Structure probing data (DMS and 2A3) for a 177-nucleotide construct. For DMS, 5,892 sequencing reads were counted. High DMS reactivity at an A or C suggests that its Watson-Crick edge is free. The reactions ran in a buffer of 150 mM KOAc, 10 mM MgCl2 and 150 mM bicine (pH 8.5), at 24 C. DMS adducts were read by reverse transcription with MarathonRT. Reactivities are given for positions 27 through 126.

RNA sequence: GGGAACGACUCGAGUAGAGUCGAAAAUGCAGGCACGACACGCCGAUCACGAGCAGCGCGAGCCCGAUCGCGUCGAUCCGCUGCUUCGUCGUCUUCGUCUCGCGGCCGCGCAGCAGGAAGAACGCGAGUAAUAGCGGGAGUUCGCUCCCGCUAUUACAAAAGAAACAACAACAACAAC
Reactivity to DMS in 0.01 (KOAc 150mM, MgCl2 10mM, bicine 150mM(pH8.5), 24C), signal-to-noise 6, nucleotides 027 to 126: u000g020c040a170g000g010c020a070c020g010a070c130a080c060g030c050c060g000a070u010c270a050c060g010a080g000c020a050g010c010g010c120g010a090g000c080c050c020g000a140u000c090g010c070g010u000c030g000a220u000c040c020g020c020u000g010c020u000u000c150g030u000c130g000u000c060u000u000c060g010u010c100u010c150g020c050g010g010c000c020g020c170g000c030a040g000c070a060g020g010a080a080g010a090a060c040g000c040g010a080
Reactivity to 2A3 in 0.01 (KOAc 150mM, MgCl2 10mM, bicine 150mM(pH8.5), 24C), signal-to-noise 2, nucleotides 027 to 126: u100g000c030a030g010g020c030a010c070g060a020c020a010c100g040c030c000g000a000u080c040a020c050g040a020g000c010a000g010c030g050c100g050a020g030c000c070c000g030a060u070c050g020c060g050u020c020g020a070u020c020c000g000c000u010g000c000u100u060c020g010u010c000g010u000c000u060u070c040g060u010c030u040c060g040c050g030g010c020c000g020c040g000c010a010g000c010a040g030g070a050a020g050a050a020c040g020c040g030a040